[RMDB]
RNA sequence: GGGAACGACUCGAGUAGAGUCGAAAAGGGAAACUCCCCGGCCCCGCUGUAGGGGGACCUUCAGCGACAGGGCCAGAACGAAUAAGGUCCCCAAAUAAUAAAAAUAAUAAAUAAAAACUGGGUCUUCGGGCUCAGAAAAGAAACAACAACAACAAC
Reactivity to 2A3 in 0.01 (KOAc 150mM, MgCl2 10mM, bicine 150mM(pH8.5), 24C), signal-to-noise 2, nucleotides 027 to 135: g080g010g060a070a070a070c040u060c010c010c000c000g020g000c000c000c000c010g010c000u010g000u040a030g020g010g020g030g120a000c000c000u010u010c000a010g000c010g050a080c110a270g000g020g000c000c000a010g020a090a050c110g060a060a040u120a060a010g000g000u000c010c000c000c010a020a030a010u080a000a020u130a030a080a070a000a010u290a130a030u210a150a200a010u230a080a170a110a010a020c000u010g020g000g000u010c000u040u080c300g120g000g000c000u000c020a000g010a070

Conditions: 150 mM KOAc, 10 mM MgCl2 and 150 mM bicine (pH 8.5), 24 C. Chemical mapping of a 155-nucleotide RNA with 2A3. Source: RMDB library P90LIB, as collected in RNAgym.